The data come from the RNA Mapping Database (RMDB), library OK1LIB.
An RNA of 177 nucleotides, treated with 2A3 and DMS and read out base by base.
For 2A3, 939 sequencing reads were counted.
For DMS the reverse transcriptase was MarathonRT.
Conditions: 150 mM KOAc, 10 mM MgCl2 and 150 mM bicine (pH 8.5), 24 C.

[RMDB]
RNA sequence: GGGAACGACUCGAGUAGAGUCGAAAAGCCGCAUGAUGAAAGGAGUAGGUCUGGGCGAGAUAGAGUUCGACAUCUGCGGCCUCGCCGGGGCUAGAGACCUAUCCUUGUCAUCAAGUAUACUAGCCCCCUAUAUAAUUAAUUUCGAUUAAUUAUAUAGAAAAGAAACAACAACAACAAC
Reactivity to 2A3 in 0.01 (KOAc 150mM, MgCl2 10mM, bicine 150mM(pH8.5), 24C), signal-to-noise 1, nucleotides 027 to 126: g000c010c000g000c080a050u130g000a020u010g050a040a080a000g020g010a030g140u030a020g030g000u000c020u040g110g020g010c020g010a020g000a020u100a060g120a020g150u140u210c100g020a000c020a070u010c060u050g030c010g030g010c000c000u010c010g000c000c020g030g000g000g040c020u050a020g000a000g000a060c000c000u000a010u000c000c000u000u050g060u010c010a030u060c020a030a050g030u020a080u010a100c010u020a010g000c000c000c000c010
Reactivity to DMS in 0.01 (KOAc 150mM, MgCl2 10mM, bicine 150mM(pH8.5), 24C), signal-to-noise 2, nucleotides 027 to 126: g010c050c040g010c020a060u040g000a010u000g000a120a050a040g010g000a050g000u000a030g000g000u000c010u010g020g010g010c010g000a010g010a180u010a060g000a150g010u020u040c110g020a180c070a040u020c030u000g000c000g000g010c050c000u000c000g010c000c040g010g010g000g020c030u010a030g000a070g000a030c000c000u000a020u000c010c000u000u010g000u010c080a100u020c090a080a140g020u020a090u010a050c030u000a060g000c010c010c010c130